Conditions: 150 mM KOAc, 10 mM MgCl2 and 150 mM bicine (pH 8.5), 24 C. Structure probing data (2A3 and DMS) for a 177-nucleotide construct. 2A3 adducts were read by reverse transcription with SuperScript II with manganese. The data come from the RNA Mapping Database (RMDB), library OK1LIB.
RNA sequence: GGGAACGACUCGAGUAGAGUCGAAAAGAGAAAUUAGGAAUUAAGAACUUUUCUACUUAUGAACAGGUUUGCAAAGUAGCCAAAGUACUUUCUGCUUCACAGAUUGAAUUCAAAAAUGAGCUAGAGGUCUCAUCAUUGAUUUCGAUCAAUGAUGAGAAAAAGAAACAACAACAACAAC
Reactivity to 2A3 in 0.01 (KOAc 150mM, MgCl2 10mM, bicine 150mM(pH8.5), 24C), signal-to-noise 7, nucleotides 027 to 126: g050a000g010a000a090a050u210u140a100g070g090a030a060u130u080a160a070g060a090a030c010u030u010u030u030c000u010a070c000u060u100a100u230g030a080a040c060a100g210g060u120u140u150g070c030a030a030a010g010u010a010g010c050c060a040a050a000g030u030a050c000u010u060u010c020u020g050c050u090u080c030a030c020a110g070a060u020u080g070a100a160u080u090c090a050a000a030a020a080u140g010a050g040c010u060a040g030a050g160g050
Reactivity to DMS in 0.01 (KOAc 150mM, MgCl2 10mM, bicine 150mM(pH8.5), 24C), signal-to-noise 4, nucleotides 027 to 126: g000a110g000a050a050a080u010u010a070g010g010a090a040u020u020a050a060g000a110a060c010u010u020u000u010c000u010a050c020u010u000a070u030g010a110a060c100a120g010g030u040u010u030g030c050a060a020a040g010u000a010g000c120c190a020a020a100g020u000a060c040u000u010u000c020u010g010c120u020u010c100a100c110a070g000a070u020u000g010a070a060u010u030c070a010a040a070a070a070u030g010a040g010c050u020a060g010a080g000g010